[RMDB]
RNA sequence: GGGAACGACUCGAGUAGAGUCGAAAAUAUUAGAAGGACACAAACAUUCUGCCUUCUGCCGUGUGAGGACACAGGGAGAAGGCAGCUGUGCUUAACAGAGCCAUGUGAGCAGAGGCAGUGGUGUGAAUUAGAUCUGUCUGGCAGAUAUUAAAAGUCACAUGAGCCUAUGAUUCGUCAUAGGCUCAUGAAAAGAAACAACAACAACAAC
Reactivity to DMS in 0.01 (KOAc 150mM, MgCl2 10mM, bicine 150mM(pH8.5), 24C), signal-to-noise 2, nucleotides 027 to 156: u010a100u020u010a080g030a060a160g010g000a080c030a060c140a050a060a070c020a080u000u010c010u000g000c000c000u000u010c010u010g000c020c020g000u030g050u000g010a180g040g030a300c030a010c040a110g070g010g010a010g000a050a040g000g060c010a000g000c050u010g020u020g020c050u000u030a130a130c100a130g010a120g020c000c020a100u010g030u000g010a090g000c030a080g000a100g020g000c070a070g000u000g030g010u020g000u000g010a080a190u000u000a050g000a110u000c010u000g010u000c020u000g010g090c050a100g040a070u000a070u000u000a050a130a070a160g000u000c060a150
Reactivity to 2A3 in 0.01 (KOAc 150mM, MgCl2 10mM, bicine 150mM(pH8.5), 24C), signal-to-noise 3, nucleotides 027 to 156: u150a020u110u140a070g030a090a070g040g010a000c030a010c030a110a190a010c050a090u150u030c000u000g000c000c000u020u020c000u030g160c000c050g060u070g000u030g080a190g070g100a040c060a030c090a100g050g000g000a010g000a000a000g020g000c000a000g000c000u000g000u020g000c030u060u080a080a000c030a040g030a000g120c040c010a040u050g010u060g060a070g000c040a020g010a010g060g000c030a020g040u010g030g000u030g000u010g060a030a090u080u040a090g050a100u020c020u030g040u010c030u040g040g010c010a010g040a040u050a010u020u120a130a080a030a000g080u080c020a000
The record gives the reactivity of an RNA of 207 nucleotides to DMS and 2A3. Source: RMDB library OK3TST, as collected in RNAgym. The RNA was probed in 150 mM KOAc, 10 mM MgCl2 and 150 mM bicine (pH 8.5) at 24 C. DMS adducts were read by reverse transcription with MarathonRT. Reactivities are given for positions 27 through 156. The DMS profile rests on 3,323 reads.